RNA sequence: GGGAACGACUCGAGUAGAGUCGAAAACCCUGUCAUGAGGCCGAAACGAAGGCACGUACCCCUUCGAACGGCGUCGGGGAGUCAGCGGCUAUAUAUGCGCCUAAUGCUGGCAUCCGGGAACGAGCGUAUUAGACAGUAAUCUUCGGAUUACUGUCAAUCUAUUACUGCGGUUCGCCGCAGUAAUAGAAAAAGAAACAACAACAACAAC
Reactivity to 2A3 in 0.01 (KOAc 150mM, MgCl2 10mM, bicine 150mM(pH8.5), 24C), signal-to-noise 2, nucleotides 027 to 156: c010c000c040u100g090u070c090a090u220g060a050g010g070c030c010g020a070a090a000c000g000a020a020g000g050c060a010c050g120u260a150c050c000c000c000u010u000c010g010a100a050c000g000g040c090g020u010c020g050g000g020g000a080g040u020c000a000g010c000g040g000c040u000a000u050a050u020a010u300g240c060g040c000c020u050a160a070u300g000c010u020g000g000c000a140u000c010c020g070g010g100a070a000c040g030a030g060c050g020u060a060u060u150a080g000a000c000a000g000u010a000a000u010c010u020u020c200g010g000a010u000u010a000c020u010g030u000c000a000a000
Reactivity to DMS in 0.01 (KOAc 150mM, MgCl2 10mM, bicine 150mM(pH8.5), 24C), signal-to-noise 1, nucleotides 027 to 156: c000c010c020u000g010u000c030a150u000g020a080g010g010c020c040g030a130a140a240c040g010a020a020g010g000c090a200c170g010u000a200c130c100c000c000u000u000c020g000a070a300c000g000g010c000g040u000c000g000g000g000g000a170g040u010c020a040g080c000g010g050c030u010a150u000a080u010a100u000g040c150g040c020c040u020a070a080u010g030c010u000g000g050c020a030u000c030c030g000g010g020a090a100c060g000a170g030c040g000u000a090u000u010a240g000a010c020a020g030u000a030a000u000c000u000u020c190g010g010a020u000u010a020c000u000g000u020c000a020a050